Chemical mapping of a 207-nucleotide RNA with 2A3 and DMS. The RNA was probed in 150 mM KOAc, 10 mM MgCl2 and 150 mM bicine (pH 8.5) at 24 C. For 2A3 the reverse transcriptase was SuperScript II with manganese. DMS adducts were read by reverse transcription with MarathonRT. Reactivities are rounded to 0.1 and cut off at 0 and 3.
[RMDB]
RNA sequence: GGGAACGACUCGAGUAGAGUCGAAAAGUGUAUAGGCAAGCCGACCCUCCGCCUAUACACGAAUUAAGGAGGGCGGAGAUCUUAUGCUCGCGAUCUUACGUCACGAGCGACGGCCUGCGGCUCGUGACGGAUCUUACGCAGGCCAUAGCGAGCUACAAUAAAUAUGGCUAUUCGUAGCCAUAUUUAUAAAAGAAACAACAACAACAAC
Reactivity to 2A3 in 0.01 (KOAc 150mM, MgCl2 10mM, bicine 150mM(pH8.5), 24C), signal-to-noise 2, nucleotides 027 to 156: g000u010g000u000a000u000a010g010g010c050a040a030g090c040c030g180a300c040c000c010u040c040c030g000c000c000u000a000u000a000c010a010c010g010a020a020u160u110a060a000g030g000a010g000g000g000c000g060g000a050g000a020u030c020u120u140a100u230g020c010u010c000g030c010g010a030u000c020u080u070a050c010g000u000c000a000c010g010a010g010c090g060a040c030g000g000c000c000u020g000c020g040g010c000u000c000g010u000g000a010c000g000g030a010u020c060u060u120a040c030g010c000a000g000g000c000c000a040u070a000g010c010g010a010g020c020u060a030c110a100
Reactivity to DMS in 0.01 (KOAc 150mM, MgCl2 10mM, bicine 150mM(pH8.5), 24C), signal-to-noise 1, nucleotides 027 to 156: g020u000g000u010a010u000a020g000g020c060a050a110g030c040c020g040a220c040c010c000u000c020c000g030c000c010u040a030u000a000c010a040c010g010a070a080u010u000a090a120g010g010a080g010g000g010c080g000g000a110g000a120u010c070u000u000a040u020g010c020u080c010g020c040g000a060u000c000u000u000a150c000g000u000c020a020c000g000a010g020c030g000a030c030g000g000c100c030u010g020c020g020g000c000u000c020g010u010g020a100c050g000g000a040u000c070u000u000a130c070g000c050a040g000g020c020c050a110u000a080g000c030g000a050g010c020u000a110c080a130